[RMDB]
RNA sequence: GGGAACGACUCGAGUAGAGUCGAAAAACGCAUUGACUUCGGCGGGCAACAGCAUUUUACGCUCAAAAACCCACGCCAGCACAAACAGCAAGAUGGCCGACAGCGCGUUGAGCAGCGCCAUAUUCAUUAACGAUGCAGGAUUCGUCCUGCAUCGUUAAAAAGAAACAACAACAACAAC
Reactivity to 2A3 in 0.01 (KOAc 150mM, MgCl2 10mM, bicine 150mM(pH8.5), 24C), signal-to-noise 1, nucleotides 027 to 126: a000c050g010c040a030u040u170g060a110c040u040u030c040g030g000c000g000g060g010c000a010a030c010a050g000c000a030u030u090u040u210a130c120g000c030u020c030a040a090a030a050a070c000c000c000a020c050g040c030c010a020g070c010a000c080a030a120a080c060a040g010c000a030a050g000a100u070g070g000c000c010g040a030c020a050g000c010g000c020g030u020u090g020a020g020c010a030g030c030g000c040c000a060u100a100u090u040c020a060u050
Reactivity to DMS in 0.01 (KOAc 150mM, MgCl2 10mM, bicine 150mM(pH8.5), 24C), signal-to-noise 2, nucleotides 027 to 126: a040c170g000c000a090u070u000g000a090c070u050u000c040g000g000c140g010g000g000c000a070a080c100a110g020c040a120u000u000u000u050a080c080g000c030u000c030a020a020a060a110a140c020c010c000a040c150g000c030c030a080g020c030a090c140a180a080a110c100a070g000c090a070a040g000a120u040g000g010c000c000g010a030c060a060g010c000g010c060g000u000u020g000a130g020c020a030g000c100g000c000c020a040u000a070u000u000c080a190u010
Description:
Structure probing data (2A3 and DMS) for a 177-nucleotide construct. The 2A3 profile rests on 1,297 reads. The RNA was probed in 150 mM KOAc, 10 mM MgCl2 and 150 mM bicine (pH 8.5) at 24 C.